The record gives the reactivity of an RNA of 207 nucleotides to 2A3. The RNA was probed in 150 mM KOAc, 10 mM MgCl2 and 150 mM bicine (pH 8.5) at 24 C. For 2A3, 984 sequencing reads were counted.
RNA sequence: GGGAACGACUCGAGUAGAGUCGAAAAAGACGGAAACCCAUCGACUGUCACCAGAUGCUGCAUCACCUGAUCACUGAUGGCUCAAUGGUAUCCGGCGGUACAACUGAAUACUUGUAGCUGCCUUUUGAAAAGGAGUUCAUCUUCGGAUGAACUCCAAGUGCUCUCUUCUGUUCGCAGAAGAGAGCACAAAAGAAACAACAACAACAAC
Reactivity to 2A3 in 0.01 (KOAc 150mM, MgCl2 10mM, bicine 150mM(pH8.5), 24C), signal-to-noise 2, nucleotides 027 to 156: a000g050a010c050g060g020a040a020a030c030c090c000a020u060c030g040a060c080u070g000u090c000a020c030c020a030g020a100u120g060c070u070g060c040a040u090c010a060c030c030u080g060a080u040c040a040c050u040g010a030u010g000g060c010u040c090a050a040u010g050g000u050a030u050c040c060g010g000c000g040g030u020a020c000a040a000c040u150g070a130a050u140a220c030u010u080g030u080a060g120c030u030g000c010c000u070u120u080u170g160a140a130a010a030g010g000a000g000u000u000c000a010u000c000u040u010c170g110g000a000u000g010a030a000c020u000c000c000a000a000